[RMDB]
RNA sequence: GGGAACGACUCGAGUAGAGUCGAAAAGACUAUAGUUGCUGGGAUGUUGCACAAAGCUCAGCGAAACGAAGUUGUCGCAAUGUUACUUCCUCGGAGAAGGAUCCUUGACCUGAGGCAAGGUAUCAGAGUCGUGGUCCUAUUUCGAUAGGACCACGACAAAAGAAACAACAACAACAAC
Reactivity to DMS in 0.01 (KOAc 150mM, MgCl2 10mM, bicine 150mM(pH8.5), 24C), signal-to-noise 1, nucleotides 027 to 126: g000a060c050u000a070u030a130g030u000u000g010c020u010g000g000g000a030u010g000u000u000g030c300a160c180a130a080a110g000c020u000c020a090g020c010g020a020a010a070c050g020a260a120g000u000u000g040u030c030g020c140a120a170u000g000u000u000a110c100u000u000c000c000u000c030g000g000a090g020a220a030g000g010a150u020c070c000u010u000g000a210c010c000u010g000a040g010g000c120a030a030g000g000u000a060u000c030a100g000a300